RNA sequence: GGGAACGACUCGAGUAGAGUCGAAAAGUAUAUGACUUCGGUCAUAUACAAAGCCCGAUCGAAGGCCAACAGCGACUUCAACGCCAACCGAUCAAGAAGAAAAAAGAUGCACCUUCGGGUGCAUCAACUUGAAGGAAUACUUCGGUAUUCCUUCAAGAAAAGAAACAACAACAACAAC
Reactivity to 2A3 in 0.01 (KOAc 150mM, MgCl2 10mM, bicine 150mM(pH8.5), 24C), signal-to-noise 3, nucleotides 027 to 126: g010u010a010u010a020u010g000a000c000u020u040c190g090g000u010c010a000u000a000u000a000c000a000a060a030g030c010c030c000g000a040u030c020g030a090a040g030g000c030c030a080a030c020a200g130c020g180a090c080u160u080c150a110a030c050g000c010c010a040a080c060c000g040a030u040c020a040a080g120a060a040g100a030a210a020a000a020a010g000a000u000g000c000a000c000c010u040u080c290g090g000g000u010g010c000a000u010c000a000a000
Reactivity to DMS in 0.01 (KOAc 150mM, MgCl2 10mM, bicine 150mM(pH8.5), 24C), signal-to-noise 3, nucleotides 027 to 126: g020u000a000u000a000u000g000a020c000u000u000c190g020g000u000c000a000u000a000u020a000c020a070a130a160g000c000c000c000g000a020u000c050g020a100a200g000g000c000c120a090a160c150a070g000c110g020a040c120u010u000c100a100a100c150g000c020c000a050a150c160c010g010a060u000c070a110a100g020a110a110g010a010a090a110a050a110a070g000a000u010g000c000a010c000c010u000u000c280g030g010g030u010g010c000a010u000c000a010a070
Chemical mapping of a 177-nucleotide RNA with 2A3 and DMS. For 2A3 the reverse transcriptase was SuperScript II with manganese. The RNA was probed in 150 mM KOAc, 10 mM MgCl2 and 150 mM bicine (pH 8.5) at 24 C. The 2A3 profile rests on 2,490 reads. DMS adducts were read by reverse transcription with MarathonRT. It was measured as part of the RMDB library M2PK50.